[RMDB]
RNA sequence: GGGAACGACUCGAGUAGAGUCGAAAAGUUCGCAUGGUGCACUAUUGUCUUAUUAGUAACUAAGUAAGCUUACAAUCGAAAAUGUUUAACCAUAAAAGGGUAAAAUGGUGUAAGACAGUCUGAUACUUUACGGCUUCACGUUUCGACGUGAAGCCAAUCUAGUGUUAACCUUCGGGUUAACACUAGAAAAAGAAACAACAACAACAAC
Reactivity to 2A3 in 0.01 (KOAc 150mM, MgCl2 10mM, bicine 150mM(pH8.5), 24C), signal-to-noise 3, nucleotides 027 to 156: g030u070u090c050g000c110a050u130g060g020u070g010c060a030c060u080a050u080u070g020u020c010u030u060a060u040u010a070g110u050a100a050c030u010a110a080g050u030a070a000g060c020u030u020a040c040a120a140u080c050g110a150a030a000a000u030g020u050u110u030a020a000c000c010a010u090a120a180a020a000g030g020g010u020a030a020a030a040u050g010g000u020g010u040a040a010g040a010c010a000g060u010c080u030g060a050u040a210c000u050u090u080a070c060g000g000c000u000u000c000a000c010g010u000u020u170c230g080a020c010g000u000g000a000a000g030c000c000a000a000
Reactivity to DMS in 0.01 (KOAc 150mM, MgCl2 10mM, bicine 150mM(pH8.5), 24C), signal-to-noise 2, nucleotides 027 to 156: g010u000u010c020g010c060a300u000g010g050u000g010c050a090c100u000a080u000u010g000u000c010u000u000a030u000u010a080g010u010a070a100c050u000a080a170g010u010a050a090g020c070u000u010a020c000a070a090u000c080g010a050a050a120a090u010g030u000u000u000a080a040c000c010a040u000a050a070a090a250g000g000g020u000a020a050a070a030u000g000g010u000g020u000a030a070g000a060c020a080g010u000c070u010g000a100u000a060c030u000u000u010a140c080g040g010c000u000u000c010a000c000g020u000u010u000c280g030a040c030g020u000g030a000a000g000c010c000a000a010